[RMDB]
RNA sequence: GGGAACGACUCGAGUAGAGUCGAAAAUAUUUAAUCUCCAUGCAUGGUGAAACAGCUGUGGGAGAACUGAGAAAGGGUGCUUAGUCUAACCUGAGAGCCCAGAAGAGGAGCCUCACACACCUGUGAAGGUAGUAUAGGACUUCGGUCCUAUACUACCAAAAGAAACAACAACAACAAC
Reactivity to DMS in 0.01 (KOAc 150mM, MgCl2 10mM, bicine 150mM(pH8.5), 24C), signal-to-noise 2, nucleotides 027 to 126: u050a160u000u010u000a150a140u010c070u000c000c040a070u020g040c070a100u010g020g010u020g010a130a110a070c040a050g010c230u000g070u010g000g000g000a050g010a260a150c040u000g000a110g030a060a190a060g010g010g010u010g000c020u000u000a020g030u000c200u020a100a110c300c000u010g000a040g000a170g000c010c010c020a070g020a180a240g010a040g000g010a050g020c110c020u000c000a010c040a040c030a000c110c000u010g000u000g000a150a080
Reactivity to 2A3 in 0.01 (KOAc 150mM, MgCl2 10mM, bicine 150mM(pH8.5), 24C), signal-to-noise 1, nucleotides 027 to 126: u110a030u030u080u120a080a070u060c010u010c060c010a020u140g060c010a060u110g080g000u090g040a160a030a020c020a000g030c020u040g000u040g000g010g010a020g030a040a040c050u060g050a020g080a160a070a040g010g010g020u020g010c000u020u050a020g010u010c070u140a060a120c040c020u020g010a010g010a000g010c020c030c000a020g060a130a010g010a040g060g000a020g040c020c020u000c030a000c000a010c000a020c030c040u020g050u050g060a130a030